[RMDB]
The record gives the reactivity of an RNA of 177 nucleotides to 2A3 and DMS. The DMS profile rests on 28,549 reads. Conditions: 150 mM KOAc, 10 mM MgCl2 and 150 mM bicine (pH 8.5), 24 C. For 2A3 the reverse transcriptase was SuperScript II with manganese. The 2A3 profile rests on 48,497 reads. DMS adducts were read by reverse transcription with MarathonRT.
RNA sequence: GGGAACGACUCGAGUAGAGUCGAAAAGAUAUGGAUCCCUGGUAACUUCGAGGAUCUCGGAAACGAGGGAGAAGACCACAUGGGAUCCUAAGUCAAAGUGCUAAGAUGGUUCGCCAUCUUAGCACAACAACAAGAAAUAGUUCGCUAUUUCUUGUUGAAAAGAAACAACAACAACAAC
Reactivity to 2A3 in 0.01 (KOAc 150mM, MgCl2 10mM, bicine 150mM(pH8.5), 24C), signal-to-noise 8, nucleotides 027 to 126: g010a020u070a050u110g000g000a010u000c010c010c010u020g040g030u090a270a160c010u010u000c010g080a270g040g010a020u010c000u000c010g010g030a080a070a050c010g000a010g010g010g010a020g000a010a010g090a110c020c010a090c060a220u170g000g000g000a000u000c000c000u010a110a000g020u010c060a110a070a090g010u010g000c000u000a000a000g000a010u010g010g060u060u200c260g060c050c000a010u000c000u000u000a000g000c000a000c000a000a000
Reactivity to DMS in 0.01 (KOAc 150mM, MgCl2 10mM, bicine 150mM(pH8.5), 24C), signal-to-noise 9, nucleotides 027 to 126: g000a040u000a300u010g010g000a010u000c000c000c000u000g000g010u000a080a080c010u000u000c000g000a090g020g000a030u000c000u000c000g010g000a130a100a210c010g000a020g000g000g000a030g010a020a010g020a080c040c060a060c280a100u010g000g010g010a000u000c000c000u000a010a080g010u000c030a080a120a110g010u000g010c000u000a010a000g000a010u000g000g010u000u010c260g010c000c000a010u000c000u000u000a000g000c000a000c000a030a100